[RMDB]
The record gives the reactivity of an RNA of 177 nucleotides to DMS.
RNA sequence: GGGAACGACUCGAGUAGAGUCGAAAACAGUCAAUGUGAAGGCGGGCCAGACCAUCGCCGCAUUCUACCAGAGCACCGUCAUGAUCUUUGGCACGAUGGCUCGCUACAUCCGGAGAGUUAGGGAAAAAAUGCAUAUGGGCUUCGGCCCAUAUGCAUUAAAAGAAACAACAACAACAAC
Reactivity to DMS in 0.01 (KOAc 150mM, MgCl2 10mM, bicine 150mM(pH8.5), 24C), signal-to-noise 1, nucleotides 027 to 126: c020a040g040u010c110a130a090u030g000u000g000a070a120g010g020c000g020g010g010c020c010a050g030a150c130c060a080u030c100g000c080c030g000c120a120u000u000c060u020a090c040c080a070g000a070g020c060a050c110c020g020u000c120a030u000g030a060u000c010u000u010u010g010g030c060a060c110g000a100u000g010g050c030u000c030g010c000u000a020c150a010u000c090c050g000g010a100g000a100g010u010u000a080g000g000g000a000a000a090a090
Values cover nucleotides 27 to 126. For DMS, 725 sequencing reads were counted.